[RMDB]
RNA sequence: GGGAACGACUCGAGUAGAGUCGAAAACAGUAUGCCUUCGGGCAUACUGAAACCAGAGGGUAUCUGGCCCACGCUCCCAUGCGUGCCGGGAAUCCCAACCCAAAACGGAUGUCUUCGGACAUCCGAAGUAUCUUUGAAAGUUCGCUUUCAAAGAUACAAAAGAAACAACAACAACAAC
Reactivity to DMS in 0.01 (KOAc 150mM, MgCl2 10mM, bicine 150mM(pH8.5), 24C), signal-to-noise 6, nucleotides 027 to 126: c010a010g010u000a000u000g010c000c000u000u020c210g010g000g000c000a000u000a000c000u000g000a020a080a160c050c050a050g010a090g010g010g010u000a050u000c010u000g010g000c070c090c100a060c000g020c010u000c170c170c160a090u000g000c010g010u000g000c090c030g000g000g000a140a120u000c010c000c010a060a140c020c020c020a040a050a110a200c010g000g000a010u000g000u000c000u000u010c190g020g000a010c000a000u000c000c000g000a010a050
Reactivity to 2A3 in 0.01 (KOAc 150mM, MgCl2 10mM, bicine 150mM(pH8.5), 24C), signal-to-noise 8, nucleotides 027 to 126: c000a000g000u000a000u010g000c000c010u050u100c300g090g000g000c000a000u000a000c000u000g000a050a000a000c030c010a020g070a080g110g040g020u090a070u110c010u010g020g010c030c090c000a000c000g000c000u220c040c050c030a050u230g000c010g000u020g020c030c020g010g000g030a020a070u080c000c000c000a030a060c020c000c020a030a090a000a030c020g000g000a000u000g000u000c010u050u100c230g060g000a000c000a000u020c000c000g000a000a000
Conditions: 150 mM KOAc, 10 mM MgCl2 and 150 mM bicine (pH 8.5), 24 C. This 177-nucleotide RNA was probed chemically with DMS and 2A3. It was measured as part of the RMDB library M2PK50. The DMS profile rests on 7,662 reads. The 2A3 profile rests on 23,451 reads.